[RMDB]
RNA sequence: GGGAACGACUCGAGUAGAGUCGAAAAGGGUUUGAGCCAUCGCCCGAAUACGAUGGCUGAUACAAGUCGCCAUUGUACGCGACGUAGUACGUACUCAUUAGUGCGAAAGCACGGUUAGUCCGACUUGGCAGGGACGAUCUUCUGUCAAUACUUAGAAAUAUUUAUAGUCAUUCGUGACUAUAAAUAUAAAAGAAACAACAACAACAAC
Reactivity to 2A3 in 0.01 (KOAc 150mM, MgCl2 10mM, bicine 150mM(pH8.5), 24C), signal-to-noise 6, nucleotides 027 to 156: g060g010g010u080u130u160g080a000g000c000c000a000u010c010g000c010c010c010g040a060a050u090a030c020g000a000u000g000g010c000u000g010a020u050a060c090a110a060g000u000c010g000c010c020a150u110u260g070u160a080c060g000c010g010a010c010g000u000a010g020u020a040c000g000u010a020c000u010c010a030u020u090a120g000u010g000c000g040a120a030a000g000c000a000c000g010g010u020u020a010g000u020c070c000g020a050c060u030u030g000g000c000a010g020g010g030a060c090g090a130u040c020u140u010c010u040g010u000c000a030a070u070a150c030u070u100a040g050a050a240
Reactivity to DMS in 0.01 (KOAc 150mM, MgCl2 10mM, bicine 150mM(pH8.5), 24C), signal-to-noise 4, nucleotides 027 to 156: g020g010g020u000u010u010g010a050g020c000c040a040u000c000g030c010c050c190g010a150a170u000a030c000g010a010u000g010g010c010u000g020a080u000a030c100a100a110g030u000c010g050c000c030a140u000u000g010u000a070c020g030c000g020a060c050g000u000a100g030u000a050c050g020u000a020c030u000c100a160u000u010a080g030u020g000c010g010a120a110a210g020c020a020c000g020g020u000u000a120g030u000c040c020g010a080c110u000u000g020g010c010a060g010g010g000a080c100g010a120u000c060u000u000c010u010g010u000c010a030a070u000a090c060u010u010a130g010a140a140